[RMDB]
RNA sequence: GGGAACGACUCGAGUAGAGUCGAAAAUAUUGAGACAUUGGACUGGGCACCAUAGUCUCCCUGUGCAGACCCUCCAUAAACAUUUACAAAGAGUCCUGCAUACUGGACAUCACUAACAUCCUCCGGGACCAUGGGUCCAUUUCGAUGGACCCAUGGUAAAAGAAACAACAACAACAAC
Reactivity to DMS in 0.01 (KOAc 150mM, MgCl2 10mM, bicine 150mM(pH8.5), 24C), signal-to-noise 2, nucleotides 027 to 126: u000a090u040u030g000a040g000a050c040a150u010u030g040g010a180c030u010g010g010g030c010a020c040c000a040u000a150g000u000c000u000c030c030c010u040g030u000g000c000a020g010a130c050c000c000u000c060c040a100u050a080a040a070c090a090u020u020u000a100c220a030a090a150g000a090g000u000c060c000u000g000c040a110u040a050c100u000g010g000a120c020a050u000c090a020c150u000a060a010c030a180u000c030c000u000c030c000g010g020g000
Reactivity to 2A3 in 0.01 (KOAc 150mM, MgCl2 10mM, bicine 150mM(pH8.5), 24C), signal-to-noise 4, nucleotides 027 to 126: u280a060u050u170g030a010g000a000c050a030u020u020g010g030a030c070u080g030g070g010c040a010c010c010a030u030a060g010u020c000u020c030c000c000u070g020u060g000c020a020g010a130c020c000c000u000c040c000a020u160a050a140a070c080a120u190u240u300a060c060a050a150a000g040a020g010u040c010c000u000g040c030a020u040a170c070u030g010g010a020c010a060u120c020a010c060u100a110a010c020a050u000c000c030u020c010c010g050g000g060
An RNA of 177 nucleotides, treated with DMS and 2A3 and read out base by base.
Reactivities are given for positions 27 through 126.
DMS adducts were read by reverse transcription with MarathonRT.
2A3 adducts were read by reverse transcription with SuperScript II with manganese.